[RMDB]
RNA sequence: GGGAACGACUCGAGUAGAGUCGAAAACUCAUGUGGUUUAGUGUUUGAGGUGUACUUUAAAGCAAGCAGUAAUGGUGAAAGGAAAAUAUAUUUUGCCAAUGUCGAUGUUUUAAGUCGGGAAGUCGUAAAUCGCGUUCCACACCGAUCGGCAAGUAGAGCUCCUAUGUAUCUUCGGAUACAUAGGAGCAAAAGAAACAACAACAACAAC
Reactivity to DMS in 0.01 (KOAc 150mM, MgCl2 10mM, bicine 150mM(pH8.5), 24C), signal-to-noise 1, nucleotides 027 to 156: c020u000c020a190u000g010u000g000g000u000u000u000a120g020u020g030u000u030u000g050a060g040g020u010g030u000a070c010u000u000u000a080a130a130g000c030a080a100g000c040a110g020u000a060a070u000g030g000u010g000a070a050a090g030g020a080a070a100a100u030a090u000a080u000u000u000u010g080c010c000a040a170u000g030u010c030g010a110u000g020u000u040u010u000a060a080g010u000c090g000g040g000a040a100g020u000c010g050u000a060a020a110u000c020g000c010g000u000u000c010c060a120c010a070c040c020g000a080u000c070g000g030c000a010a060g020u010a100g030a180
Reactivity to 2A3 in 0.01 (KOAc 150mM, MgCl2 10mM, bicine 150mM(pH8.5), 24C), signal-to-noise 2, nucleotides 027 to 156: c010u020c020a060u120g020u060g100g030u040u080u090a110g020u070g030u110u060u120g040a070g010g020u030g040u030a060c030u050u070u130a050a070a070g030c010a090a000g020c000a010g010u100a160a110u010g060g020u060g100a000a020a060g110g090a020a010a100a040u300a030u020a020u060u070u030u050g030c030c000a000a010u040g010u050c030g030a000u020g060u010u120u050u140a010a060g000u010c060g000g010g030a050a040g090u070c020g010u060a090a090a050u140c130g000c040g060u080u000c000c000a040c000a010c030c010g000a010u010c000g140g020c050a080a000g110u120a020g000a000